[RMDB]
RNA sequence: GGGAACGACUCGAGUAGAGUCGAAAAGAAUGAUUCGUCAUUCCAUCAGGGGUCCUGGGAGGAUGUAUCCGAGGAUCUAUACUGAAGCCUCCACGGUAUAGGGAGGUACAUCCAUCGAUCAGGACGGAGGCACCCAGCAUGGCCGUUUCGACGGCAAAGCUUGUCUUUGGUUCGCCAAAGACAAGCUAAAAGAAACAACAACAACAAC
Reactivity to 2A3 in 0.01 (KOAc 150mM, MgCl2 10mM, bicine 150mM(pH8.5), 24C), signal-to-noise 2, nucleotides 027 to 156: g000a000a000u050g020a000u060u200c230g070u030c120a010u030u000c040c020a120u180c130a090g000g040g070g040u000c030c000u050g040g120g000a110g000g000a000u000g000u030a090u300c030c020g050a240g000g010a010u000c010u000a000u000a000c000u020g050a180a030g000c000c000u000c000c000a010c000g010g000u010a010u000a010g000g000g000a030g000g000u000a000c000a010u000c060c000a230u090c050g150a140u280c080a040g020g020a050c030g000g000a000g020g000c020a020c020c020c000a070g140c090a220u210g090g010c010c010g040u100u090u190c240g170a050c010g030g000c000a060a060